[RMDB]
RNA sequence: GGGAACGACUCGAGUAGAGUCGAAAAUUUUUUACAUUAGAAAAAUGGUCCUGCUAGACUACUGAGUUCAUCAGCAAGUACUUUUGAGCAGAGUAUAAAAGCAUAUCAUAUGAUGAAUAAAUUUCUUGGCUCCUUCAUUGACCAUGUAUGUAUGUCACUCCAUGCUAAAAUUCGUUUUAGCAUGGAGAAAAGAAACAACAACAACAAC
Reactivity to DMS in 0.01 (KOAc 150mM, MgCl2 10mM, bicine 150mM(pH8.5), 24C), signal-to-noise 1, nucleotides 027 to 156: u000u000u000u000u000u000a150c030a150u010u020a170g000a110a070a150a110a040u010g000g000u020c050c040u000g000c020u000a160g000a200c060u000a020c030u030g010a210g020u010u010c060a070u000c000a070g040c050a080a250g050u000a060c070u020u020u000u020g020a190g090c120a110g000a190g010u000a090u000a120a050a100a120g020c020a090u020a060u020c040a120u020a080u000g000a040u000g000a030a070u000a020a060a110u000u000u000c050u000u000g080g000c000u010c000c020u000u000c030a140u000u000g000a090c020c020a080u000g030u000a030u000g030u010a080u000g000u010c000a100
Reactivity to 2A3 in 0.01 (KOAc 150mM, MgCl2 10mM, bicine 150mM(pH8.5), 24C), signal-to-noise 2, nucleotides 027 to 156: u030u000u000u000u110u160a060c030a090u120u210a110g090a030a080a010a010a070u030g020g000u000c030c010u030g040c020u020a030g020a080c020u070a040c000u130g020a030g080u000u060c050a040u010c020a030g020c020a170a000g020u040a090c040u130u150u050u030g030a020g040c020a000g020a010g150u040a050u040a100a100a020a030g020c030a020u080a020u250c050a000u030a080u220g030a000u000g010a030a030u020a120a090a040u050u080u040c030u030u000g010g020c050u020c040c010u020u030c090a090u080u150g060a060c030c060a040u050g010u080a070u030g040u000a050u130g030u060c080a000